[RMDB]
RNA sequence: GGGAACGACUCGAGUAGAGUCGAAAAAUCACCGGUGGGGAACCCCAUACGGCAACGGCGUAGAAGUAAAUGAUAACCAAUCCGUGGUAUCUACGCGACGGAGCAUCCACGGAUAACUCUAACAAGGCUAAGCGUCUCGGUUUCGACCGAGACGCAACAUUGGAAAUUCGUUCGCGAAUUUCCAAUGAAAAGAAACAACAACAACAAC
Reactivity to 2A3 in 0.01 (KOAc 150mM, MgCl2 10mM, bicine 150mM(pH8.5), 24C), signal-to-noise 1, nucleotides 027 to 156: a000u070c000a000c010c000g050g000u000g000g010g020g160a120a140c070c010c000c020a040u030a100c020g020g000c050a060a060c020g060g000c010g000u020a000g060a100a010g000u140a070a070a110u090g070a080u130a140a000c060c080a080a040u000c020c010g000u000g000g000u010a050u000c000u000a000c030g000c000g050a040c080g090g010a020g020c100a030u040c000c000a020c020g010g000a000u000a010a020c010u000c020u160a070a090c030a080a030g180g030c060u120a130a000g020c010g000u020c000u010c020g010g000u020u070u120c230g020a020c030c000g000a000g080a000c000g020c000a000a000

Source: RMDB library M2RFPK, as collected in RNAgym. Chemical mapping of a 207-nucleotide RNA with 2A3. The 2A3 profile rests on 513 reads. The RNA was probed in 150 mM KOAc, 10 mM MgCl2 and 150 mM bicine (pH 8.5) at 24 C. 2A3 adducts were read by reverse transcription with SuperScript II with manganese. Reactivities are given for positions 27 through 156.